The record gives the reactivity of an RNA of 177 nucleotides to DMS and 2A3. The DMS profile rests on 1,541 reads.
RNA sequence: GGGAACGACUCGAGUAGAGUCGAAAAUGUAGGGUCGGAAAUUUUGCACACAUUUACAAUAAUUGUAAAUGUGUUGAAAAUCGUUUGCACGACUGUGAAAAGUACGUGCAGCUUCGGCUGCACGUACCGAACAUACGCUCUUCGGAGCGUAUGUUCGAAAAGAAACAACAACAACAAC
Reactivity to DMS in 0.01 (KOAc 150mM, MgCl2 10mM, bicine 150mM(pH8.5), 24C), signal-to-noise 2, nucleotides 027 to 126: u010g000u010a080g020g000g030u000c000g000g010a070a040a030u010u000u000u010g030c030a030c000a000c000a000u000u000u000a000c000a000a290u020a080a180u010u000g010u000a000a010a010u000g010u010g000u000u000g000a020a000a010a010u000c110g010u000u010u010g030c190a190c030g010a010c010u020g010u010g030a070a060a090a090g010u010a000c000g020u000g000c000a000g000c010u000u020c200g050g000c000u000g000c010a000c000g010u000a000c020
Reactivity to 2A3 in 0.01 (KOAc 150mM, MgCl2 10mM, bicine 150mM(pH8.5), 24C), signal-to-noise 1, nucleotides 027 to 126: u210g040u080a130g140g000g030u030c040g020g000a010a000a140u050u030u010u200g020c020a000c020a000c000a000u020u010u030a010c000a010a100u220a300a190u150u010g000u000a030a030a000u010g000u020g010u020u040g000a000a000a000a000u120c080g080u060u080u230g110c140a120c060g000a000c000u010g010u110g190a120a070a020a020g020u000a000c000g020u010g040c000a010g020c000u020u090c240g090g000c010u010g000c000a010c020g000u000a000c000
For 2A3 the reverse transcriptase was SuperScript II with manganese. Reactivities are given for positions 27 through 126. The reactions ran in a buffer of 150 mM KOAc, 10 mM MgCl2 and 150 mM bicine (pH 8.5), at 24 C.